[RMDB]
Source information:
This 177-nucleotide RNA was probed chemically with DMS and 2A3. For DMS, 1,303 sequencing reads were counted. The RNA was probed in 150 mM KOAc, 10 mM MgCl2 and 150 mM bicine (pH 8.5) at 24 C. For DMS the reverse transcriptase was MarathonRT. Source: RMDB library VIROID, as collected in RNAgym.
RNA sequence: GGGAACGACUCGAGUAGAGUCGAAAAGGGUGCCCUAUCCGAGCACUGCUGUUUCGGUAGAAAGGCUAAGCACGUCGCAAUGACGUAAGGUGGGACUUUUCCCUCUGGAACCAAGCGGUUGGUUCCGCCAUUGAGGUUCGUUCGCGAACCUCAAUGGAAAAGAAACAACAACAACAAC
Reactivity to DMS in 0.01 (KOAc 150mM, MgCl2 10mM, bicine 150mM(pH8.5), 24C), signal-to-noise 2, nucleotides 027 to 126: g010g020g000u000g000c000c010c030u010a120u000c030c020g000a050g030c000a040c200u010g030c060u020g030u000u000u010c010g000g010u000a060g000a020a080a100g020g020c010u010a090a160g030c070a140c000g000u000c040g020c130a180a080u010g000a040c020g010u000a040a060g010g000u000g000g010g030a050c080u000u000u010u000c000c000c010u000c140u030g010g010a010a020c000c020a030a010g010c190g000g000u010u000g010g030u000u000c000c000g020
Reactivity to 2A3 in 0.01 (KOAc 150mM, MgCl2 10mM, bicine 150mM(pH8.5), 24C), signal-to-noise 2, nucleotides 027 to 126: g120g000g040u120g110c070c000c000u010a040u000c020c010g030a020g020c050a030c100u130g000c000u040g120u240u220u080c070g020g040u060a100g040a050a070a010g100g000c030u050a120a000g040c090a010c000g010u010c020g040c220a230a300u300g000a000c010g000u010a010a040g070g000u040g000g000g040a020c040u090u080u010u030c000c020c000u030c060u040g010g010a000a000c000c010a020a000g120c070g300g150u030u000g000g020u040u000c000c000g030